RNA sequence: GGGAACGACUCGAGUAGAGUCGAAAAAUGGAAGGUCUGUUCCGUCAGAUUGGUAUUUACAGCCCGAACGGUCAGCAGUACACCCCGCAGGACCGCGAGCAGGUUGCUUACUAUAAAGAAGACGAGACCAGUGGGUUACAUUCGUGUAACCCACUGGAAAAGAAACAACAACAACAAC
Reactivity to DMS in 0.01 (KOAc 150mM, MgCl2 10mM, bicine 150mM(pH8.5), 24C), signal-to-noise 1, nucleotides 027 to 126: a120u020g010g050a080a110g000g010u000c020u000g000u000u000c060c050g010u000c070a110g000a250u010u000g000g020u000a020u000u000u000a070c110a070g010c030c000c060g020a030a100c010g020g030u000c050a100g000c010a020g020u010a130c110a130c050c180c040c050g010c060a090g000g000a020c000c030g040c010g010a220g020c100a130g010g020u010u000g000c080u000u010a090c020u000a050u020a060a120a080g000a120a090g010a000c080g010a060g000a090